[RMDB]
RNA sequence: GGGAACGACUCGAGUAGAGUCGAAAAUAACAGGAGAGUAGAUGAUUCGCGUUAAGUGUGUGUGAAUGGGAUGUCGUCACACAACGAAGCGAGAGCGCGGUCAAUCAUUGCAUCCGCUCCAAAACAAUCUGUUAUCUUUGUUCGCAAAGAUAACAGAAAAAGAAACAACAACAACAAC
Reactivity to DMS in 0.01 (KOAc 150mM, MgCl2 10mM, bicine 150mM(pH8.5), 24C), signal-to-noise 3, nucleotides 027 to 126: u010a100a140c190a130g000g020a030g000a090g010u000a120g010a030u010g000a010u000u000c020g010c010g020u000u010a040a110g010u000g010u010g010u000g000u010g000a050a040u000g010g030g010a030u000g020u020c130g000u000c010a000c010a010c000a010a000c030g020a120a130g020c210g000a160g030a030g000c010g000c000g000g030u010c180a050a040u000c030a030u000u010g000c020a040u000c020c010g020c010u000c010c010a050a050a070a070c230a090a110
Reactivity to 2A3 in 0.01 (KOAc 150mM, MgCl2 10mM, bicine 150mM(pH8.5), 24C), signal-to-noise 3, nucleotides 027 to 126: u100a020a030c040a050g050g000a020g000a030g080u260a030g020a080u020g000a000u080u120c020g000c010g020u050u070a140a040g060u090g000u000g000u000g000u000g170a030a040u040g020g010g040a010u050g080u130c060g010u000c000a000c010a000c000a010a030c050g080a110a020g130c040g060a070g030a020g060c000g000c020g000g000u050c020a010a040u010c010a020u000u050g000c000a020u010c020c010g000c000u020c010c010a030a070a010a050c060a030a090

Chemical mapping of a 177-nucleotide RNA with DMS and 2A3. Source: RMDB library M2PK90, as collected in RNAgym. Reactivities are rounded to 0.1 and cut off at 0 and 3. The reactions ran in a buffer of 150 mM KOAc, 10 mM MgCl2 and 150 mM bicine (pH 8.5), at 24 C.